The record gives the reactivity of an RNA of 177 nucleotides to 2A3 and DMS. The DMS profile rests on 10,754 reads. Conditions: 150 mM KOAc, 10 mM MgCl2 and 150 mM bicine (pH 8.5), 24 C.

RNA sequence: GGGAACGACUCGAGUAGAGUCGAAAAACAAGCUUUGACAGACAUAACAGCAAAGGUUUUGGCGCGCAAGAAGUGAGCUUAGGAUUGUCCCAAUUUGUAAAAAUAGGCUUGCUCUUGUUUAUAGAGGAUAAAGUGAAUAUUUCGAUAUUCACUUUAUAAAAGAAACAACAACAACAAC
Reactivity to 2A3 in 0.01 (KOAc 150mM, MgCl2 10mM, bicine 150mM(pH8.5), 24C), signal-to-noise 3, nucleotides 027 to 126: a000c040a050a020g040c060u060u100u120g040a070c030a030g070a020c020a080u180a140a030c010a080g030c020a050a050a090g020g010u010u040u100u120g080g010c070g000c030g000c050a030a020g060a070a010g050u000g030a010g010c010u010u020a030g030g070a090u060u110g050u070c020c010c020a020a060u090u090u120g090u090a040a050a010a050a070u050a040g010g000c000u000u000g000c010u010c000u030u060g040u090u140u060a160u100a040g110a040g110g050
Reactivity to DMS in 0.01 (KOAc 150mM, MgCl2 10mM, bicine 150mM(pH8.5), 24C), signal-to-noise 8, nucleotides 027 to 126: a090c080a070a080g010c060u000u000u000g010a120c080a100g010a100c100a070u010a090a080c100a090g010c060a050a080a100g000g010u000u010u000u000g000g020c060g030c230g010c040a020a020g000a060a060g020u000g000a030g000c020u000u000a030g000g000a130u000u000g000u000c020c010c010a100a070u010u010u010g010u010a030a050a050a070a140u000a030g010g010c020u000u000g010c010u000c020u000u000g000u000u000u010a070u010a100g010a110g000g010

The data come from the RNA Mapping Database (RMDB), library OK2TRN. The 2A3 profile rests on 3,430 reads.